[RMDB]
The record gives the reactivity of an RNA of 207 nucleotides to 2A3 and DMS.

RNA sequence: GGGAACGACUCGAGUAGAGUCGAAAACUGCCUUUUCGAAGGCAGAAGCAUCCUAAGUCGGGAGUAUCUCUAAGACCACGAAGAACACAUCGGAAACGAUGUGGGAGUGGUCUGGAUACAUCGAUCGAUAUGGACCACGGCUCAAUUCGUUGAGCAAACUUGUCAAGUAAUUCGUUACUUGACAAGUAAAAGAAACAACAACAACAAC
Reactivity to 2A3 in 0.01 (KOAc 150mM, MgCl2 10mM, bicine 150mM(pH8.5), 24C), signal-to-noise 9, nucleotides 027 to 156: c010u010g000c010c010u050u030u060u160c300g150a010a000g000g000c010a000g010a010a010g080c030a060u010c000c000u050a130a050g020u010c010g000g030g000a110g020u010a010u010c080u010c090u200a140a030g010a000c000c000a010c010g300a300a060g010a050a000c000a000c000a000u000c000g050g000a070a080a040c010g000a000u000g000u010g000g000g000a020g000u000g000g000u000c000u000g000g000a000u010a000c030a150u020c020g090a090u090c010g010a010u010a070u180g030g010a030c030c040a100c160g110g000c010u010c010a020a070u170u090c190g080u120u030g000a000g000c000a040a030
Reactivity to DMS in 0.01 (KOAc 150mM, MgCl2 10mM, bicine 150mM(pH8.5), 24C), signal-to-noise 6, nucleotides 027 to 156: c010u010g010c000c000u000u000u010u010c240g020a040a020g010g020c000a010g010a030a110g010c100a120u000c030c020u000a090a150g020u000c000g000g000g000a150g060u000a000u000c000u000c090u010a070a050g000a120c010c010a010c010g010a120a170g000a160a180c000a010c000a010u000c020g010g010a180a100a300c010g030a010u000g020u000g000g000g010a150g020u000g010g020u000c000u000g030g010a030u000a010c010a100u000c040g000a060u000c020g010a160u000a190u000g010g010a060c030c030a100c110g030g000c000u000c010a030a130u000u000c170g010u000u000g010a040g010c010a130a100

The RNA was probed in 150 mM KOAc, 10 mM MgCl2 and 150 mM bicine (pH 8.5) at 24 C.